[RMDB]
RNA sequence: GGGAACGACUCGAGUAGAGUCGAAAAGCGUUAAAAGAAUAUGCUUCAAACACUAGUGCUUUAGCGGAAUUUGCAAAAUCUACCGUUAAAACAUUGUAUAGCAAAUCUCCGACUUCAAUUGCUGUUAGUGGAUAUCCCUAUUCGUAGGGAUAUCCACAAAAGAAACAACAACAACAAC
Reactivity to 2A3 in 0.01 (KOAc 150mM, MgCl2 10mM, bicine 150mM(pH8.5), 24C), signal-to-noise 1, nucleotides 027 to 126: g000c020g040u080u080a070a040a040a040g090a050a070u150a030u140g020c040u080u120c140a060a210a000c020a010c100u120a040g030u010g000c000u100u060u000a000g000c010g000g000a070a030u000u020u150g060c040a040a000a000a300u050c020u140a120c050c020g060u060u040a000a120a020a000c000a010u010u030g020u040a070u110a060g000c010a000a000a070u060c040u000c110c000g120a180c040u040u090c080a120a160u080u110g000c010u060g030u220u040a050
Reactivity to DMS in 0.01 (KOAc 150mM, MgCl2 10mM, bicine 150mM(pH8.5), 24C), signal-to-noise 2, nucleotides 027 to 126: g030c040g030u000u000a130a070a090a160g010a110a070u020a090u000g010c000u010u010c100a140a090a140c100a070c170u000a040g020u000g000c020u000u000u010a060g010c000g010g010a110a050u000u020u000g020c140a040a060a030a070u010c090u000a070c090c100g020u000u020a030a020a060a030c020a020u000u000g010u000a060u020a090g020c010a010a080a110u000c100u000c070c040g030a100c080u000u000c100a050a060u010u000g000c020u000g030u000u020a090